[RMDB]
Conditions: 150 mM KOAc, 10 mM MgCl2 and 150 mM bicine (pH 8.5), 24 C. An RNA of 177 nucleotides, treated with 2A3 and DMS and read out base by base.
RNA sequence: GGGAACGACUCGAGUAGAGUCGAAAAGUUGCGCGGUUGUAGCGACGUCGAAGGCGAAGACGGUGCACUGUUUUUUCCUCGUUUUCGAGGGGAGUGCACGAAGAAGCCGAGCUAUUGCCGCGCUUAAGGGCAGUUUUGGCUUCGGCCGGGGCUGCCCAAAAGAAACAACAACAACAAC
Reactivity to 2A3 in 0.01 (KOAc 150mM, MgCl2 10mM, bicine 150mM(pH8.5), 24C), signal-to-noise 9, nucleotides 027 to 126: g270u220u150g000c010g000c000g020g000u030u020g010u020a010g000c020g020a080c050g100u160c080g110a170a070g030g000c030g050a060a020g120a040c100g050g020u010g000c000a000c000u010g220u060u110u000u000u130u150c000c020u020c010g020u060u180u180u300c050g000a000g000g000g010g010a010g000u000g000c000a000c000g000a040a020g040a040a000g000c000c020g000a010g010c000u000a000u000u030g000c000c000g000c000g000c010u010u000a020a010
Reactivity to DMS in 0.01 (KOAc 150mM, MgCl2 10mM, bicine 150mM(pH8.5), 24C), signal-to-noise 9, nucleotides 027 to 126: g010u020u010g000c000g020c010g010g030u000u010g020u000a010g010c000g020a220c300g010u020c180g010a130a160g010g000c010g000a150a170g010a150c160g010g020u010g000c000a010c000u000g010u000u010u030u030u020u030c000c000u000c000g010u010u010u020u030c040g000a020g000g000g010g000a020g010u010g000c000a000c010g010a080a070g010a160a300g010c000c010g000a080g000c010u000a000u000u010g000c000c000g020c000g010c010u000u010a030a150
It was measured as part of the RMDB library OK1LIB. DMS adducts were read by reverse transcription with MarathonRT. The DMS profile rests on 50,482 reads.